[RMDB]
RNA sequence: GGGAACGACUCGAGUAGAGUCGAAAAUCUGCUUUGCUCUAUUAGCUAUGGCCUCCAGUUUCCAUCCUCACUUCAGCAACCCAAAAUCUACUAGUACCCUUUCUUUCUUUAAUAAAUCACUAAAUGCUUGAUUUGUGUGUGCAUUAGUCAUGUUGAAGGUAUGUUGCAGUUUCGACUGCAACAUACCAAAAGAAACAACAACAACAAC
Reactivity to 2A3 in 0.01 (KOAc 150mM, MgCl2 10mM, bicine 150mM(pH8.5), 24C), signal-to-noise 1, nucleotides 027 to 156: u090c030u030g000c010u090u150u080g030c030u000c000u050a130u100u160a080g000c020u010a240u150g020g070c000c070u000c010c020a050g000u010u100u000c070c020a110u050c020c020u060c010a080c050u080u070c140a010g020c040a110a070c050c000c100a080a030a000a080u060c060u030a080c010u020a040g030u050a050c000c020c000u040u000u050c020u050u010u070c000u050u090u050a240a120u140a130a110a010u140c000a030c030u140a120a040a050u070g000c000u050u040g030a130u160u150u020g130u030g000u040g020u050g080c000a000u000u090a000g010u060c030a170u150g000u030u030g090a100a040

This 207-nucleotide RNA was probed chemically with 2A3. The reactions ran in a buffer of 150 mM KOAc, 10 mM MgCl2 and 150 mM bicine (pH 8.5), at 24 C. For 2A3, 435 sequencing reads were counted.